The record gives the reactivity of an RNA of 177 nucleotides to DMS and 2A3. For DMS, 4,074 sequencing reads were counted. 2A3 adducts were read by reverse transcription with SuperScript II with manganese. Source: RMDB library OK1LIB, as collected in RNAgym. The reactions ran in a buffer of 150 mM KOAc, 10 mM MgCl2 and 150 mM bicine (pH 8.5), at 24 C.
RNA sequence: GGGAACGACUCGAGUAGAGUCGAAAAAACAUUUACUGCGCCGAGCUGGAAAACGUUCUGGCCAGCCAUCCCGACAUCGCCGAAGUCGCGGUCAUCGGCCGGGCCGACGAGAAGUGGGGAGAGGUGCACGAAUACGAUCUUUCGAGAUCGUAUUCGUAAAAGAAACAACAACAACAAC
Reactivity to DMS in 0.01 (KOAc 150mM, MgCl2 10mM, bicine 150mM(pH8.5), 24C), signal-to-noise 3, nucleotides 027 to 126: a070a100c140a070u030u000u020a090c120u000g030c020g020c000c020g040a110g020c000u020g010g030a110a020a080a130c110g000u000u000c010u000g010g020c000c010a080g010c030c180a210u010c010c000c020g050a060c060a100u010c010g010c020c010g000a180a050g020u000c050g010c030g000g040u010c100a070u040c210g000g000c000c020g000g020g010c020c040g000a210c150g010a040g000a070a110g000u030g000g000g000g000a030g000a120g000g020u000g000c010
Reactivity to 2A3 in 0.01 (KOAc 150mM, MgCl2 10mM, bicine 150mM(pH8.5), 24C), signal-to-noise 4, nucleotides 027 to 126: a000a000c150a060u170u120u110a120c030u050g010c020g000c000c000g020a020g000c020u040g000g030a040a080a040a030c080g020u090u030c060u150g080g040c000c000a000g000c000c010a090u000c000c010c000g030a020c010a050u020c010g000c020c000g070a180a060g020u020c030g010c040g300g020u000c040a250u140c120g070g010c000c000g000g010g000c040c010g020a050c020g010a040g020a160a060g040u070g030g020g010g000a030g000a020g000g010u040g000c050